[RMDB]
RNA sequence: GGGAACGACUCGAGUAGAGUCGAAAAGAAAUUACGUUUCCUUUACACUUCUCAAACCGGGAUCAAGAGAAGCAAAGCAUCCCUCAUAUCCACGAUGGAGGGUUUCGUGGAGUAUACUGUACCAAAAAGAGCGAACACGGCUUCGGCCGUGUUCGAACAGUGAUUCUGUCUUCGGACAGAAUCACUGAAAAGAAACAACAACAACAAC
Reactivity to 2A3 in 0.01 (KOAc 150mM, MgCl2 10mM, bicine 150mM(pH8.5), 24C), signal-to-noise 1, nucleotides 027 to 156: g030a000a060a010u210u130a050c130g000u020u070u000c030c000u070u030u090a050c060a020c040u070u000c030u000c130a220a040a020c090c020g030g020g000a010u040c030a300a060g050a030g010a020a020g080c090a030a030a030g020c000a010u000c000c000c000u060c000a010u040a060u150c000c000a030c010g010a020u030g030g150a100g080g040g080u000u020u000c010g000u000g010g000a030g010u000a030u010a080c040u110g050u170a040c020c050a080a080a000a050a100g220a050g070c000g020a000a000c000a000c010g000g100c010u070u120c200g010g000c000c000g000u000g000u000u000c000g000a000a000